An RNA of 177 nucleotides, treated with DMS and 2A3 and read out base by base. For 2A3, 1,617 sequencing reads were counted. Conditions: 150 mM KOAc, 10 mM MgCl2 and 150 mM bicine (pH 8.5), 24 C. For DMS the reverse transcriptase was MarathonRT. 2A3 adducts were read by reverse transcription with SuperScript II with manganese. Source: RMDB library RFMREP, as collected in RNAgym.
RNA sequence: GGGAACGACUCGAGUAGAGUCGAAAAGCUAAUUUUUUUUGUGGGCCCACUUUCGAUAGUUAGUCACUAGCGGAAGCUCAGGAAGAGCAGCUUUGGUCUCUCAGCACUUUAAUCCUGCUUCUCGUUCACAUUAUACGCAGUUCGCUGCGUAUAAUGUAAAAGAAACAACAACAACAAC
Reactivity to DMS in 0.01 (KOAc 150mM, MgCl2 10mM, bicine 150mM(pH8.5), 24C), signal-to-noise 2, nucleotides 027 to 126: g010c050u000a040a000u000u000u000u040u010u010u030u000g020u010g010g010g020c080c040c060a080c030u000u000u010c030g000a100u010a030g020u000u000a110g010u010c240a170c030u000a020g010c030g010g000a040a020g010c070u000c050a060g000g010a040a070g000a060g020c150a060g010c030u000u000u010g020g020u010c050u000c030u000c060a090g010c050a040c040u020u010u010a080a090u000c060c040u010g000c080u000u000c030u000c030g030u010u000c100
Reactivity to 2A3 in 0.01 (KOAc 150mM, MgCl2 10mM, bicine 150mM(pH8.5), 24C), signal-to-noise 2, nucleotides 027 to 126: g010c010u060a060a140u130u080u090u030u020u000u120u200g120u060g060g040g020c020c020c010a000c000u070u050u090c010g030a020u010a040g010u060u030a030g110u110c010a020c040u030a020g020c000g010g030a030a000g040c020u000c060a020g060g040a060a060g000a030g030c050a000g000c040u000u030u110g080g030u030c010u020c000u000c040a040g030c010a010c040u000u060u090a030a050u050c010c000u010g040c040u030u050c030u000c030g110u110u080c060